[RMDB]
RNA sequence: GGGAACGACUCGAGUAGAGUCGAAAAGGUGUACUCACUGUUCUUACUGUCAAAUGCACUGUAACAUCCAUGUUAGUUUGAUACAUGCUGUUGGAUUUGGGUUCUUGUUCCACUGUCUCCGUUGUUUGUAUAUAAUUAGCCACUGAUCCCAUCCUGACGGUAAUCCAGUGUUCGCACUGGAUUACCGAAAAGAAACAACAACAACAAC
Reactivity to 2A3 in 0.01 (KOAc 150mM, MgCl2 10mM, bicine 150mM(pH8.5), 24C), signal-to-noise 1, nucleotides 027 to 156: g010g000u000g000u020a070c030u060c000a030c050u090g070u070u000c060u110u040a050c020u010g030u080c010a000a000a080u090g060c040a020c070u030g020u120a080a010c030a050u120c020c000a060u020g010u000u030a060g060u110u010u110g140a120u000a000c000a070u050g000c010u030g000u090u040g000g080a060u020u060u100g020g000g010u060u140c010u060u050g120u070u030c020c000a070c020u040g080u000c000u000c080c070g010u010u010g000u000u080u000g050u040a070u010a010u000a050a190u040u000a000g030c020c000a020c020u000g040a080u000c030c000c000a010u050c050c020u020g020a020